Source: RMDB library OK2TST, as collected in RNAgym. Structure probing data (DMS and 2A3) for a 177-nucleotide construct. The 2A3 profile rests on 10,967 reads. Values cover nucleotides 27 to 126. DMS adducts were read by reverse transcription with MarathonRT.
RNA sequence: GGGAACGACUCGAGUAGAGUCGAAAAAGUGUUGCACGCGGCCACAAUCGCUCCGUUCGUGAGAUCGCGGGACGCCGUGGGUACCCGCAGAACUGUCGGCGUGCCUGUGCUGGACAUAAACCGGUUACGGUAUACUCCUAUUCGUAGGAGUAUACCGAAAAGAAACAACAACAACAAC
Reactivity to DMS in 0.01 (KOAc 150mM, MgCl2 10mM, bicine 150mM(pH8.5), 24C), signal-to-noise 9, nucleotides 027 to 126: a110g020u000g010u000u000g010c020a050c040g020c050g000g010c060c060a050c070a070a090u010c110g000c030u000c030c040g010u000u000c100g010u020g010a090g000a080u010c110g010c040g000g000g010a070c120g010c060c080g030u000g010g010g020u000a080c020c010c010g020c040a130g000a060a060c100u000g010u000c050g020g020c070g010u000g020c040c070u000g010u000g010c030u000g000g000a060c060a050u000a030a090a190c030c010g010g000u000u000a160
Reactivity to 2A3 in 0.01 (KOAc 150mM, MgCl2 10mM, bicine 150mM(pH8.5), 24C), signal-to-noise 7, nucleotides 027 to 126: a010g080u080g040u060u060g030c010a010c050g040c050g040g000c040c020a070c050a050a090u120c050g020c050u020c030c020g070u100u140c070g040u110g120a100g010a100u120c070g000c000g020g000g030a060c070g020c090c040g070u130g070g050g000u090a140c000c010c010g020c040a030g030a090a030c040u050g030u130c030g030g000c040g020u040g030c010c010u030g000u020g000c010u060g050g030a020c010a060u140a050a080a010c010c010g010g030u110u120a040